The record gives the reactivity of an RNA of 177 nucleotides to 2A3 and DMS. For 2A3, 1,167 sequencing reads were counted. Reactivities are given for positions 27 through 126.
[RMDB]
RNA sequence: GGGAACGACUCGAGUAGAGUCGAAAAUCCCGGGAGCGCCGCGGGCCGGUGCUCGGCUCGUUGGGCCAUGCAGCGGCGGCCGCCGCGGAGCUGCGAGCGGCGGUAGCGCCCCCUGUGAGAAGGCCCGGUGCCUAAAUAUCUUCGGAUAUUUAGGCACAAAAGAAACAACAACAACAAC
Reactivity to 2A3 in 0.01 (KOAc 150mM, MgCl2 10mM, bicine 150mM(pH8.5), 24C), signal-to-noise 2, nucleotides 027 to 126: u010c000c000c010g000g080g010a020g000c050g010c000c070g010c020g030g090g000c090c000g040g040u090g030c040u040c000g000g050c020u040c040g110u080u160g020g000g000c000c020a010u140g000c010a000g030c000g040g010c000g000g000c000c000g010c000c010g030c000g020g020a070g050c100u150g020c030g070a070g000c000g020g000c030g020g000u070a070g090c000g000c010c000c010c000c010u020g000u040g080a160g040a120a130g010g000c000c000c000g010
Reactivity to DMS in 0.01 (KOAc 150mM, MgCl2 10mM, bicine 150mM(pH8.5), 24C), signal-to-noise 2, nucleotides 027 to 126: u010c030c000c050g000g010g040a010g010c000g010c010c030g040c040g000g010g000c040c000g020g030u000g010c100u000c000g020g020c040u000c050g030u040u000g000g000g000c030c000a140u010g010c020a040g010c300g010g000c030g010g000c000c000g000c000c010g040c010g010g010a170g030c060u010g000c010g020a300g040c070g020g000c000g000g050u010a140g020c040g000c010c000c040c000c000u020g000u030g000a170g000a140a170g000g010c010c010c000g000

For DMS the reverse transcriptase was MarathonRT.
The DMS profile rests on 1,827 reads.